[RMDB]
RNA sequence: GGGAACGACUCGAGUAGAGUCGAAAAUCUUCGGAGCCGUCAAGCCUCACAAUGCUAACUAGUGGGGAUUUGGCGUAACUUUGUUAGCCGCUCUCUCGUCUCAUCCGAAGCGAGGGAAAAGAUUAGGAUUGCCCAUCACUUCCGCCUUGGGGGCUUGCAAGAAUGAGCUGUUCGCAGCUCAUUCUUGAAAAGAAACAACAACAACAAC
Reactivity to DMS in 0.01 (KOAc 150mM, MgCl2 10mM, bicine 150mM(pH8.5), 24C), signal-to-noise 1, nucleotides 027 to 156: u010c010u000u010c070g050g010a080g020c080c030g030u020c020a050a070g030c000c010u060c010a030c000a030a220u000g040c090u030a070a170c050u000a300g010u000g000g000g020g020a040u000u000u000g030g020c000g020u000a020a020c040u010u000u000g030u000u010a120g040c000c100g050c150u000c000u000c010u010c010g000u020c020u000c050a160u000c230c130g040a030a070g000c000g020a090g000g000g000a050a020a050a080g020a110u000u000a100g030g010a100u000u000g010c000c010c010a150u000c080a080c050u010u010c030c010g020c110c050u010u000g010g010g000g010g020c060u000u000g040
Reactivity to 2A3 in 0.01 (KOAc 150mM, MgCl2 10mM, bicine 150mM(pH8.5), 24C), signal-to-noise 3, nucleotides 027 to 156: u020c010u050u020c020g020g010a040g030c010c000g040u020c010a000a020g030c000c010u000c000a030c020a030a160u210g080c070u140a110a120c050u060a130g010u000g000g030g030g010a080u060u020u050g000g000c000g020u000a000a010c020u150u140u100g060u040u070a030g040c050c020g030c010u010c000u000c000u010c000g150u010c030u010c080a280u050c060c060g050a050a010g000c000g000a000g010g010g000a020a090a020a030g050a050u150u230a060g050g010a060u050u100g040c010c000c000a030u110c000a050c040u110u020c030c050g040c050c010u040u070g040g000g000g000g030c000u010u040g010

An RNA of 207 nucleotides, treated with DMS and 2A3 and read out base by base.
For DMS the reverse transcriptase was MarathonRT.
The data come from the RNA Mapping Database (RMDB), library RSTRND.
The RNA was probed in 150 mM KOAc, 10 mM MgCl2 and 150 mM bicine (pH 8.5) at 24 C.